Chemical mapping of a 177-nucleotide RNA with 2A3 and DMS.
For 2A3, 1,341 sequencing reads were counted.
The reactions ran in a buffer of 150 mM KOAc, 10 mM MgCl2 and 150 mM bicine (pH 8.5), at 24 C.
High 2A3 reactivity points to a flexible backbone, as in loops and unpaired stretches.
RNA sequence: GGGAACGACUCGAGUAGAGUCGAAAAUGUCAAACAAGUGUUAGACUUGCUUAAUAAGGGUAUGCAACUUUUGCAUACAAAGGUCUCCUGGGCUGGUUCUAAAAUCAUUGCUGUUAUCUACAGCGGCGUUUAUGACAGUGUUCGCACUGUCAUAAACAAAAGAAACAACAACAACAAC
Reactivity to 2A3 in 0.01 (KOAc 150mM, MgCl2 10mM, bicine 150mM(pH8.5), 24C), signal-to-noise 2, nucleotides 027 to 126: u050g000u010c010a000a030a060c010a130a050g050u020g070u230u100a030g030a030c000u030u080g010c010u110u140a080a020u090a060a170g100g010g000u000a030u000g000c010a060a040c050u130u190u300u040g000c000a020u000a010c000a020a040a010g050g000u000c000u010c030c030u020g000g000g000c010u020g030g020u090u020c020u090a030a040a000a110u070c050a050u060u180g000c000u000g020u080u050a060u050c050u040a000c000a020g000c040g050g010c010
Reactivity to DMS in 0.01 (KOAc 150mM, MgCl2 10mM, bicine 150mM(pH8.5), 24C), signal-to-noise 3, nucleotides 027 to 126: u020g000u010c090a060a080a060c070a020a040g010u020g010u000u010a080g010a060c010u000u000g000c050u000u010a050a060u010a130a100g000g010g010u010a010u000g000c000a030a200c250u020u010u000u000g020c000a010u010a000c020a050a080a070g000g010u000c040u000c030c020u000g010g000g010c040u000g010g020u010u000c080u010a050a040a090a080u020c120a110u000u010g010c020u000g000u000u000a110u010c190u010a060c050a030g020c040g020g020c210